[RMDB]
RNA sequence: GGGAACGACUCGAGUAGAGUCGAAAAGGCUUUUUUAUCAUAUCAGCGCAAACACGUUUCAAGUCAUCCAAUGUUAUGUUGCGUGUUCCUUCCAUUGUUUCCGUGGCUGUUAUUAUGUGAUUGUGCAAUGCUCAGCAUAUUUCGAUAUGCUGAGCAUAAAAGAAACAACAACAACAAC
Reactivity to 2A3 in 0.01 (KOAc 150mM, MgCl2 10mM, bicine 150mM(pH8.5), 24C), signal-to-noise 3, nucleotides 027 to 126: g030g020c000u080u060u070u040u080u120a180u140c070a040u070a020u170c080a040g020c000g040c030a070a090a000c020a000c000g030u080u060u070c090a100a060g050u010c000a020u050c050c020a080a100u090g010u120u180a140u120g060u070u070g050c050g000u050g000u040u030c020c000u040u170c020c020a110u020u090g070u000u050u000c070c060g010u010g100g000c010u030g030u100u030a110u100u040a120u180g120u020g060a110u020u000g000u000g020c030a010
Reactivity to DMS in 0.01 (KOAc 150mM, MgCl2 10mM, bicine 150mM(pH8.5), 24C), signal-to-noise 2, nucleotides 027 to 126: g010g030c010u000u000u010u000u010u010a060u030c090a060u040a150u000c090a110g010c010g000c040a040a050a070c090a030c040g040u010u000u010c080a020a070g010u000c000a040u020c080c030a060a100u050g000u030u010a080u000g030u020u010g000c060g000u000g010u010u010c010c020u000u000c020c040a070u000u000g000u000u010u000c010c030g030u000g000g000c010u000g010u000u010a060u020u020a060u030g010u010g000a090u030u010g000u000g000c090a080
Source information:
This 177-nucleotide RNA was probed chemically with 2A3 and DMS. The DMS profile rests on 4,219 reads. Values cover nucleotides 27 to 126. The 2A3 profile rests on 1,151 reads.